[RMDB]
RNA sequence: GGGAACGACUCGAGUAGAGUCGAAAACUCGGUAUGCCAUGAACAGAACGUGACUAGAGGUAGAUGUUCCAUUGAGGCCUAAGAGCAGGUGGUGCAUGGCUGUAGUCAGAUAGUAUCGCGAGCUGAAAUAUAUAUCAUUAUUCGUAAUGAUAUAUAUAAAAGAAACAACAACAACAAC
Reactivity to DMS in 0.01 (KOAc 150mM, MgCl2 10mM, bicine 150mM(pH8.5), 24C), signal-to-noise 9, nucleotides 027 to 126: c020u000c020g020g010u010a050u020g000c020c030a060u010g010a100a080c080a080g000a060a070c100g010u010g000a040c030u010a050g000a060g010g000u020a090g000a060u000g010u000u010c010c020a070u020u010g000a110g010g010c010c020u020a100a100g010a160g020c050a110g000g010u000g000g000u000g010c030a040u000g010g010c010u000g020u010a030g010u000c030a060g010a050u010a050g010u010a010u000c010g000c000g000a010g000c010u000g000a010a010
Reactivity to 2A3 in 0.01 (KOAc 150mM, MgCl2 10mM, bicine 150mM(pH8.5), 24C), signal-to-noise 7, nucleotides 027 to 126: c010u010c010g030g020u090a050u090g010c010c030a030u060g030a040a010c010a030g040a050a010c030g060u030g010a010c010u030a020g020a030g110g030u030a030g030a140u030g010u040u000c000c020a000u010u060g060a040g030g020c000c010u090a110a010g060a020g010c010a010g000g020u020g010g020u020g000c000a000u020g090g010c010u020g100u040a010g010u000c010a000g020a120u090a020g050u030a030u060c010g010c020g030a010g030c020u010g010a000a060
This 177-nucleotide RNA was probed chemically with DMS and 2A3. The DMS profile rests on 56,502 reads. For 2A3, 18,708 sequencing reads were counted. The reactions ran in a buffer of 150 mM KOAc, 10 mM MgCl2 and 150 mM bicine (pH 8.5), at 24 C.